Conditions: 150 mM KOAc, 10 mM MgCl2 and 150 mM bicine (pH 8.5), 24 C. Chemical mapping of a 177-nucleotide RNA with DMS and 2A3. The DMS profile rests on 861 reads. Source: RMDB library OK2TST, as collected in RNAgym.
RNA sequence: GGGAACGACUCGAGUAGAGUCGAAAAAUGGCUACCCUCAAUAAUCAUCGCUAAUGUCGUAGCAUGCAUUUCAACAAAAGCUUCCGCUCGCGCUUCACGUACAGUGUCAGCUUUGGCGGAAACAUCCUGACCACUAGGCAUUCGUGCCUAGUGGUCAAAAAGAAACAACAACAACAAC
Reactivity to DMS in 0.01 (KOAc 150mM, MgCl2 10mM, bicine 150mM(pH8.5), 24C), signal-to-noise 2, nucleotides 027 to 126: a050u000g020g010c050u000a150c010c020c030u000c090a110a070u010a090a060u010c070a020u000c240g020c020u000a050a170u020g000u010c180g000u010a030g050c020a100u010g010c090a010u000u000u010c090a080a180c240a060a020a060a180g010c020u000u000c010c010g000c010u000c180g020c280g000c000u000u010c030a010c030g010u020a070c300a160g000u000g010u010c220a010g000c040u000u010u000g000g000c010g030g000a010a040a020c050a080u000c060c030
Reactivity to 2A3 in 0.01 (KOAc 150mM, MgCl2 10mM, bicine 150mM(pH8.5), 24C), signal-to-noise 1, nucleotides 027 to 126: a010u050g000g000c020u060a070c010c030c040u060c070a030a090u150a080a050u130c040a030u040c120g030c040u010a110a070u170g120u170c090g110u060a000g000c010a010u010g030c030a030u010u080u180c020a040a020c040a040a160a010a020g000c000u040u020c000c000g040c030u020c030g040c020g000c010u050u060c030a000c000g080u170a090c120a220g040u030g030u070c040a000g010c000u040u080u090g030g000c010g000g000a000a000a000c010a020u070c020c030